The record gives the reactivity of an RNA of 207 nucleotides to 2A3. 2A3 is a SHAPE reagent: it acylates the 2'-hydroxyl of flexible nucleotides of all four kinds. For 2A3, 484 sequencing reads were counted. Conditions: 150 mM KOAc, 10 mM MgCl2 and 150 mM bicine (pH 8.5), 24 C.
RNA sequence: GGGAACGACUCGAGUAGAGUCGAAAAUGGGCUACCAGUAAGCGAAAAAUGAUACAGGACGAAAAAAACAUAAUUCGAGAUUUUUCAGGAUGGAUUUUUUUAGGUAUCUAUCAAAACUAUUCUCAUGCAACGUAGAGCACGUUCGCGUGCUCUACAACAUCGCUUAACGGUUCGCCGUUAAGCGAUGAAAAGAAACAACAACAACAAC
Reactivity to 2A3 in 0.01 (KOAc 150mM, MgCl2 10mM, bicine 150mM(pH8.5), 24C), signal-to-noise 1, nucleotides 027 to 156: u010g030g010g010c030u070a070c000c010a030g050u110a080a030g020c050g040a100a030a020a040a000u100g030a040u110a060c040a110g040g070a040c000g020a020a020a000a020a000a060a040c050a030u140a020a090u100u120c050g020a020g000a090u020u020u020u230u190c030a020g040g070a040u010g010g000a010u090u000u030u030u000u000u060a010g000g070u050a050u000c020u000a020u050c020a000a040a000a040c020u020a140u220u000c020u000c000a020u150g000c010a050a030c180g020u030a000g000a000g000c020a000c000g000u030u040c110g020c040g040u000g000c010u010c000u000a000c000a000a010